Description:
An RNA of 177 nucleotides, treated with 2A3 and DMS and read out base by base.
RNA sequence: GGGAACGACUCGAGUAGAGUCGAAAAGAGUGCGAUAGGGGACUACACAUCCACAGCUGUGGGGGCCCUCAUUGUCGACCUGGACCUGCAGCCUGCAACACCUGUGGAUCUCAGGAUGCGCGCACACUCGAAUAGAACCUUUCGAGGUUCUAUUCGAAAAAGAAACAACAACAACAAC
Reactivity to 2A3 in 0.01 (KOAc 150mM, MgCl2 10mM, bicine 150mM(pH8.5), 24C), signal-to-noise 3, nucleotides 027 to 126: g080a000g010u040g000c010g000a040u150a130g040g010g000g030a030c040u180a050c090a010c020a080u080c070c010a050c050a060g100c060u080g000u010g030g010g010g070g080c030c040c010u020c030a070u050u210g100u150c040g010a070c000c020u010g020g000a040c000c000u000g000c010a020g010c000c040u150g070c030a060a040c030a040c030c000u000g030u050g060g060a110u000c120u060c040a020g040g030a060u090g100c030g000c000g000c020a010c000a000c030
Reactivity to DMS in 0.01 (KOAc 150mM, MgCl2 10mM, bicine 150mM(pH8.5), 24C), signal-to-noise 4, nucleotides 027 to 126: g010a130g010u010g000c000g010a110u000a200g010g000g000g020a070c030u000a110c090a040c080a070u000c020c110a050c160a100g000c190u010g010u000g000g010g010g000g000c020c020c020u000c070a060u000u020g010u000c030g000a060c030c030u000g000g000a080c020c010u000g000c060a040g000c030c020u000g000c070a080a040c080a030c240c010u000g020u000g010g000a020u000c030u010c040a020g010g010a120u000g020c020g000c030g010c030a030c040a110c140
It was measured as part of the RMDB library OK2TRN. High 2A3 reactivity points to a flexible backbone, as in loops and unpaired stretches. The RNA was probed in 150 mM KOAc, 10 mM MgCl2 and 150 mM bicine (pH 8.5) at 24 C.